[RMDB]
RNA sequence: GGGAACGACUCGAGUAGAGUCGAAAAUGUACCUGGUUGAGAGGCUCAUUGCUUGUGAAAAUCCAUUCAUGGUUAACCAAUUGGCUUAUAGCUCUAGUGCAAAUGGCAGCCUGGUUGGCACAACUUUAAGGCGGCCGCUUCGGCGGCCGCAAAAGAAACAACAACAACAAC
Reactivity to 2A3 in 0.01 (KOAc 150mM, MgCl2 10mM, bicine 150mM(pH8.5), 24C), signal-to-noise 1, nucleotides 027 to 129: u000g070u100a090c000c040u000g000g220u120u000g080a220g000a000g020g000c010u000c000a000u000u020g000c000u170u020g030u120g170a060a000a000a000u000c000c000a080u090u090c000a010u160g080g000u000u000a020a000c000c000a000a180u040u080g030g010c040u030u200a000u040a070g000c000u000c000u120a050g000u080g000c020a000a000a060u090g010g010c020a000g000c000c000u050g000g000u000u070g000g160c000a000c000a030a240c030u100u060u120a000a000g010